Chemical mapping of a 207-nucleotide RNA with 2A3. For 2A3 the reverse transcriptase was SuperScript II with manganese. 2A3 is a SHAPE reagent: it acylates the 2'-hydroxyl of flexible nucleotides of all four kinds. The reactions ran in a buffer of 150 mM KOAc, 10 mM MgCl2 and 150 mM bicine (pH 8.5), at 24 C.
[RMDB]
RNA sequence: GGGAACGACUCGAGUAGAGUCGAAAACGCGAACUCUCGCAAACUCACGCUGAGUGGCCAGGCCAGCGGCAGCGUUCAGUUCGAUGGCUCGAGCGACGUAACGAUAGAUGUCCAGCUCGCCGAUAGCCUCGCCCUGACGGGCUCCCCCAGCGCGCCGUCACUACCCGGAAUUCGUUCCGGGUAGUGAAAAAGAAACAACAACAACAAC
Reactivity to 2A3 in 0.01 (KOAc 150mM, MgCl2 10mM, bicine 150mM(pH8.5), 24C), signal-to-noise 1, nucleotides 027 to 156: c070g040c000g010a060a020c030u030c060u070c150g110c030a020a100a080c060u120c080a060c050g010c080u060g030a040g040u030g090g000c040c120a070g050g000c030c030a020g000c010g010g000c000a050g010c000g040u070u110c050a020g000u030u050c030g050a040u190g000g010c020u010c120g030a020g000c020g050a030c060g130u060a070a100c100g060a030u130a240g170a110u210g020u090c070c020a010g020c040u000c010g000c030c000g040a080u040a030g000c000c010u030c000g000c050c010c070u020g030a020c010g000g000g000c020u090c050c040c000c000c010a110g020c040g000c000g010c030c010g010